[RMDB]
RNA sequence: GGGAACGACUCGAGUAGAGUCGAAAAGGCAGGCAUGGCUACAUAAAGCUAGAGAAGUGGGUCGAAGUGGGGCGUAAAGCAAGGACGGUCCAAGGGCGAGUCGACCUCUCCAUCGGCACGAGGACGUGCCUGGUUUUGAGUGGGGGGAGGAUGUUACGACGGGACUUAUGUUCGCAUAAGUCCCGUCAAAAGAAACAACAACAACAAC
Reactivity to 2A3 in 0.01 (KOAc 150mM, MgCl2 10mM, bicine 150mM(pH8.5), 24C), signal-to-noise 1, nucleotides 027 to 156: g080g000c000a010g000g010c110a070u080g050g000c030u020a030c100a100u290a020a030a050g010c020u080a040g000a000g030a300a000g000u130g010g000g020u070c040g010a010a000g030u010g010g000g020g000c010g050u060a040a040a070g050c020a090a010g060g020a000c030g010g070u050c020c000a030a080g110g000g020c030g000a000g000u000c000g020a130c000c000u030c090u000c000c000a190u150c020g020g000c020a010c070g010a090g130g110a040c030g040u000g000c010c010u030g020g000u000u010u020u190g050a010g010u020g000g050g000g000g000g000a020g000g000a030u080g000u130u070a110c070
Record summary: Source: RMDB library VIROID, as collected in RNAgym. Structure probing data (2A3) for a 207-nucleotide construct. The reactions ran in a buffer of 150 mM KOAc, 10 mM MgCl2 and 150 mM bicine (pH 8.5), at 24 C. For 2A3 the reverse transcriptase was SuperScript II with manganese. Values cover nucleotides 27 to 156. For 2A3, 661 sequencing reads were counted.